[RMDB]
RNA sequence: GGGAACGACUCGAGUAGAGUCGAAAAUGACUUGGUUAAACACUAUAAAUGACUAGAUAAUGAGCCUGUAGCGUCUGUAGUUCCUAUAGUAGUAGUUGAACCUAGGCGUCUAGGACGUUCUAGGCACAACAUGAUUCGCGUUGAUGAUAGAAUAGGCGAGGAGGAAUUAUUUCGAUAAUUCCUCCUCAAAAGAAACAACAACAACAAC
Reactivity to DMS in 0.01 (KOAc 150mM, MgCl2 10mM, bicine 150mM(pH8.5), 24C), signal-to-noise 1, nucleotides 027 to 156: u000g010a090c070u000u010g020g030u010u010a100a070a050c020a080c010u000a040u020a050a160a140u000g000a050c050u020a070g020a150u010a100a160u020g000a070g010c020c000u010g000u010a050g020c010g040u000c030u140g040u000a100g000u000u000c020c070u010a010u010a170g030u000a090g000u010a140g000u000u010g000a100a060c000c000u020a020g000g000c000g000u000c000u000a160g040g030a030c040g010u000u010c000u010a010g010g000c000a100c020a020a070c000a140u010g010a170u010u020c020g000c240g000u010u030g010a070u020g030a140u000a050g000a060a110u000a060g020g070c280
Reactivity to 2A3 in 0.01 (KOAc 150mM, MgCl2 10mM, bicine 150mM(pH8.5), 24C), signal-to-noise 2, nucleotides 027 to 156: u130g020a040c090u100u070g000g000u100u100a040a150a050c040a000c030u120a120u080a180a210a170u150g020a050c050u060a100g010a100u040a230a050u100g060a050g050c000c000u120g010u110a010g010c010g070u040c010u040g050u080a020g010u040u000c010c000u080a140u060a120g040u010a010g000u000a000g000u000u000g050a030a010c000c000u000a010g000g000c000g000u000c050u170a090g170g050a010c000g000u190u190c010u010a000g000g000c010a000c000a000a000c010a010u140g040a180u100u100c060g010c010g110u000u120g050a080u030g010a000u090a160g060a120a130u100a060g120g000c050
Source: RMDB library OK3TST, as collected in RNAgym. An RNA of 207 nucleotides, treated with DMS and 2A3 and read out base by base. For DMS, 1,983 sequencing reads were counted.